Chemical mapping of a 177-nucleotide RNA with DMS and 2A3.
Conditions: 150 mM KOAc, 10 mM MgCl2 and 150 mM bicine (pH 8.5), 24 C.
For DMS the reverse transcriptase was MarathonRT.
[RMDB]
RNA sequence: GGGAACGACUCGAGUAGAGUCGAAAACUAGAUGAAGACUAUUUGAUCAGCUAGUUACUUCUAUCGAAUAAAGUGGCCAAAACCAACUCAUUAUAGGUCAUGAUAUAGUAAGCAGGAAGUAUUGGAAAUGCGACCAUGGAUUCGUCCAUGGUCGCAUAAAAGAAACAACAACAACAAC
Reactivity to DMS in 0.01 (KOAc 150mM, MgCl2 10mM, bicine 150mM(pH8.5), 24C), signal-to-noise 2, nucleotides 027 to 126: c000u000a040g000a000u000g010a000a080g010a090c290u000a180u050u050u030g000a130u000c110a030g000c000u000a080g000u050u000a050c060u000u000c000u000a120u030c060g010a030a080u000a020a100a290g000u000g040g010c010c070a170a020a140a180c170c100a010a040c280u000c100a050u000u000a160u000a100g000g010u000c020a020u000g000a300u030a100u000a000g030u000a150a050g000c220a120g080g000a010a000g000u040a050u000u020g000g010a080a010
Reactivity to 2A3 in 0.01 (KOAc 150mM, MgCl2 10mM, bicine 150mM(pH8.5), 24C), signal-to-noise 1, nucleotides 027 to 126: c000u000a000g000a030u030g000a000a070g150a030c050u080a180u140u090u110g300a280u300c010a000g120c000u050a050g180u090u000a020c000u030u000c000u000a100u120c030g070a300a150u000a030a000a000g000u000g000g050c000c000a050a050a000a280c150c050a000a160c000u150c170a110u000u150a040u130a300g000g000u000c000a000u030g000a120u170a000u000a000g110u070a020a020g040c000a050g070g030a000a000g000u000a000u000u220g020g000a000a080

The data come from the RNA Mapping Database (RMDB), library RFM100.